[RMDB]
RNA sequence: GGGAACGACUCGAGUAGAGUCGAAAAGAUAUGGAUUGCGAAGGGAGCUCGUCGGAAACGACUGAGCGAGGAUCUUCACAAUCCUAAGUCAAAGUGUCUCAAGACACUUCGGUGUCUUGAGACACAAGAAUAUAGAUGCGUUCGCGCAUCUAUAUUCAAAAGAAACAACAACAACAAC
Reactivity to DMS in 0.01 (KOAc 150mM, MgCl2 10mM, bicine 150mM(pH8.5), 24C), signal-to-noise 4, nucleotides 027 to 126: g000a050u000a300u010g000g010a020u000u000g020c030g010a010a010g000g000g010a030g020c000u000c000g010u000c000g000g000a090a100a210c000g000a010c000u010g020a000g030c000g000a020g020g010a040u020c000u000u000c000a020c010a000a000u000c000c000u010a020a080g010u000c030a100a120a140g010u000g000u000c000u000c010a000a010g000a010c000a000c000u010u010c140g020g010u000g000u000c000u000u000g000a010g000a000c010a000c000a000a050
Reactivity to 2A3 in 0.01 (KOAc 150mM, MgCl2 10mM, bicine 150mM(pH8.5), 24C), signal-to-noise 4, nucleotides 027 to 126: g030a000u070a030u170g000g000a000u010u010g000c020g010a000a000g010g000g000a010g000c000u000c000g000u000c010g020g040a080a080a050c020g020a020c170u300g010a000g000c000g030a020g010g000a010u000c000u000u010c010a010c000a030a000u000c000c000u010a110a010g060u040c050a040a100a120g020u000g010u010c000u000c000a000a010g010a000c010a010c030u040u090c260g090g000u000g010u040c000u000u000g000a010g000a000c000a000c000a000a000